[RMDB]
Conditions: 150 mM KOAc, 10 mM MgCl2 and 150 mM bicine (pH 8.5), 24 C. The record gives the reactivity of an RNA of 177 nucleotides to 2A3 and DMS. In probing experiments dimethyl sulfate is read out at A N1 and C N3, which are open when not base-paired. 2A3 adducts were read by reverse transcription with SuperScript II with manganese. It was measured as part of the RMDB library OK2TST.
RNA sequence: GGGAACGACUCGAGUAGAGUCGAAAAGGCGCCUCAGUGUGCGCCCAAGCCGCUGACUGAUUAAUACUUUUUGGUGCAUGAAAAAAGGCCGGACCGCAUUGAAAAACACGCGGCCCGGUCUUGUGUGCAUAACUAUGUCUUUCGAGACAUAGUUAUGAAAAGAAACAACAACAACAAC
Reactivity to 2A3 in 0.01 (KOAc 150mM, MgCl2 10mM, bicine 150mM(pH8.5), 24C), signal-to-noise 6, nucleotides 027 to 126: g030g000c020g020c040c010u100c070a100g040u050g050u090g090c010g010c000c000c010a030a020g050c020c020g010c050u030g040a030c020u030g100a110u180u150a150a080u190a220c050u150u100u070u100u170g090g010u050g000c030a040u060g070a150a090a090a050a020a010g000g000c010c010g000g000a010c000c000g020c040a020u030u070g060a120a070a000a020a010c060a020c080g000c000g000g000c010c000c000g000g000u000c000u000u000g000u000g010u040g010
Reactivity to DMS in 0.01 (KOAc 150mM, MgCl2 10mM, bicine 150mM(pH8.5), 24C), signal-to-noise 9, nucleotides 027 to 126: g000g020c030g040c020c040u010c160a090g030u010g020u010g030c020g010c020c020c040a050a240g000c040c020g010c040u000g010a080c220u000g000a120u010u010a090a120u010a100c110u000u000u000u000u010g010g010u000g010c010a040u010g000a000a040a070a110a020a020g010g000c000c000g000g000a010c010c000g020c000a060u000u000g000a080a110a070a110a120c140a020c090g010c000g000g000c000c000c000g020g010u000c000u000u000g010u000g010u000g010